[RMDB]
RNA sequence: GGGAACGACUCGAGUAGAGUCGAAAAUAGGUCGUGUUCGCACGACCUAAGAUAAAAUGCAUAAAAUGCGAGUAACCCGAAACACAAGGGAGUGCACCUGGCCUACGAUGUCGUUCGCGACAUCGAAGAUUAAGCUGAUGUUCGCAUCAGCUUAAUCAAAAGAAACAACAACAACAAC
Reactivity to 2A3 in 0.01 (KOAc 150mM, MgCl2 10mM, bicine 150mM(pH8.5), 24C), signal-to-noise 7, nucleotides 027 to 126: u070a000g000g010u000c000g000u020g050u050u070c240g030c070a000c000g010a000c000c000u000a000a010g000a000u090a010a100a020a030u130g010c030a010u130a140a300a150a030u090g020c040g010a040g060u040a070a050c000c000c020g040a100a140a000c100a020c040a100a040g060g000g000a080g030u060g030c020a030c040c020u030g060g000c000c010u040a050c020g000a000u010g000u010c010g010u020u040c250g000c000g050a000c000a010u000c000g010a030a010
Reactivity to DMS in 0.01 (KOAc 150mM, MgCl2 10mM, bicine 150mM(pH8.5), 24C), signal-to-noise 6, nucleotides 027 to 126: u000a010g000g000u000c000g030u000g010u000u010c210g030c010a010c010g010a010c000c000u000a000a010g000a130u010a060a040a080a090u010g010c030a030u010a060a040a060a300u010g000c030g010a100g010u010a080a090c020c010c020g000a070a120a060c140a070c120a080a080g000g000g000a070g020u000g010c050a070c020c030u010g010g010c040c040u000a140c020g010a030u000g010u000c000g030u010u010c160g000c010g000a010c010a000u000c000g010a030a070